The data come from the RNA Mapping Database (RMDB), library M2RFPK. The record gives the reactivity of an RNA of 207 nucleotides to 2A3. The reactions ran in a buffer of 150 mM KOAc, 10 mM MgCl2 and 150 mM bicine (pH 8.5), at 24 C.
[RMDB]
RNA sequence: GGGAACGACUCGAGUAGAGUCGAAAAUUUAACGCUGUUUUAUUGGCGCAAAGGUUUACGGAUAAACAACUAAUAAUUAAACCUUUUGUGUGCGAAACGUGGUUGCUUAACGUACUCUUUAAUCGCUUUGGGGAUGUGUCCUUCGGGACACAUCCAAGAGUCAUACGGAGUUCGCUCCGUAUGACUCAAAAGAAACAACAACAACAAC
Reactivity to 2A3 in 0.01 (KOAc 150mM, MgCl2 10mM, bicine 150mM(pH8.5), 24C), signal-to-noise 1, nucleotides 027 to 156: u100u070u030a070a000c020g000c000u020g170u050u160u100u020a110u160u200g120g000c000g000c010a020a000a040g020g000u050u000u020a030c090g060g010a100u220a210a160a020c030a080a010c110u100a010a140u070a120a050u110u110a060a020a060c000c020u000u020u100u030g100u040g030u030g050c080g000a000a100a020c060g000u020g000g060u070u020g000c010u030u090a030a010c040g060u040a040c010u020c030u080u120u080a080a160u220c070g050c110u120u130u090g070g040g000g080a010u000g000u000g000u000c000c000u000u020c080g000g000g000a000c000a000c000a000u000c000c000a000a000